[RMDB]
RNA sequence: GGGAACGACUCGAGUAGAGUCGAAAAUGUGAUUGAGAGUAUAUUCUCAUCUUCUUGCAGUUUAAAAAUGUGUAGGUAAUCUGUAUGAGGUUGAUUAUCUCUUUCUUUUACCAUAUUCCAAAGUAAGUCCGAGAGCUACAUUCGUGUAGCUCUCGGAAAAAGAAACAACAACAACAAC
Reactivity to 2A3 in 0.01 (KOAc 150mM, MgCl2 10mM, bicine 150mM(pH8.5), 24C), signal-to-noise 1, nucleotides 027 to 126: u090g000u020g000a040u010u000g000a000g000a010g070u090a090u030a000u300u060c000u000c000a040u000c010u050u000c050u000u030g000c000a020g050u060u100u150a300a270a110a090a150u200g080u120g020u230a080g060g100u000a010a010u000c000u000g000u000a000u020g000a000g020g000u010u020g000a030u000u010a000u010c040u020c000u090u000u030c000u010u020u030u100a070c030c000a000u050a160u080u000c000c000a050a000a070g140u040a040a020g120